[RMDB]
RNA sequence: GGGAACGACUCGAGUAGAGUCGAAAAUAUGCUACAUUCUAUUUUACUAAUGAGCCUGCAUUUAUUAUGCAUGUUUCUUGGUACAUUAUGUUCGGGCCUAUCGUUCCCAUAUGGAUGACCUGCGUCUCAAACCAUACUUUCGAGUAUGGUAAAAGAAACAACAACAACAAC
Reactivity to 2A3 in 0.01 (KOAc 150mM, MgCl2 10mM, bicine 150mM(pH8.5), 24C), signal-to-noise 9, nucleotides 027 to 129: u100a030u050g020c020u060a130c020a070u050u040c030u100a130u060u130u050u020a040c020u030a020a050u180g000a000g010c000c030u000g000c010a000u020u090u090a240u300u170a010u080g010c010a000u020g020u040u150u020c010u010u020g010g000u020a030c030a090u060u100a040u190g080u050u060c060g030g040g020c020c030u050a050u050c000g020u010u000c020c000c010a010u080a050u080g070g010a030u040g030a050c020c050u060g030c080g050u000c010u000c030a060a080
Reactivity to DMS in 0.01 (KOAc 150mM, MgCl2 10mM, bicine 150mM(pH8.5), 24C), signal-to-noise 9, nucleotides 027 to 129: u050a000u040g020c040u030a080c000a050u060u000c070u040a050u000u030u030u020a020c040u010a030a040u050g000a030g030c020c030u030g000c020a010u010u030u070a120u080u060a020u010g040c020a000u000g010u020u000u020c050u000u000g000g050u000a020c200a010u030u020a040u000g030u000u010c000g030g020g020c070c050u020a040u020c040g000u020u010c040c020c000a090u050a070u030g020g010a040u040g020a100c030c060u000g000c190g000u000c010u000c040a100a160
Structure probing data (2A3 and DMS) for a 170-nucleotide construct. Reactivities are given for positions 27 through 129. The reactions ran in a buffer of 150 mM KOAc, 10 mM MgCl2 and 150 mM bicine (pH 8.5), at 24 C. For DMS, 72,888 sequencing reads were counted. DMS adducts were read by reverse transcription with MarathonRT.